Structure probing data (2A3) for a 207-nucleotide construct. It was measured as part of the RMDB library OK3TST. Reactivities are given for positions 27 through 156. The reactions ran in a buffer of 150 mM KOAc, 10 mM MgCl2 and 150 mM bicine (pH 8.5), at 24 C.
RNA sequence: GGGAACGACUCGAGUAGAGUCGAAAAUGCCGAGGAUGGGAGUGAGCGGUUCAGUGAUCGAUUAUCUCGCAUGGAACCUGUAUGCGAUAAUCUAAGAUUGGCUUCUACCUAGUAUGCCAUUGACAAGGAUGGGAGUGAGCACUACAGGACGUUGAGGAUCAACAGCGAUUUUCGAAUCGCUGUUGAUAAAAGAAACAACAACAACAAC
Reactivity to 2A3 in 0.01 (KOAc 150mM, MgCl2 10mM, bicine 150mM(pH8.5), 24C), signal-to-noise 1, nucleotides 027 to 156: u170g000c010c020g020a070g050g040a040u130g090g080g000a030g030u170g060a020g060c060g050g000u100u150c000a000g030u070g030a160u110c030g000a000u010u000a000u050c110u090c030g000c000a000u020g050g020a060a160c000c000u090g060u020a000u040g000c020g040a000u000a020a010u000c120u140a030a050g020a150u040u060g000g000c020u120u060c000u140a140c030c010u000a040g000u050a020u230g020c060c060a040u020u140g030a080c030a050a000g070g000a050u040g030g050g000a060g010u090g050a000g000c060a000c070u130a030c040a000g040g000a000c000g060u050u070g050a010g030g190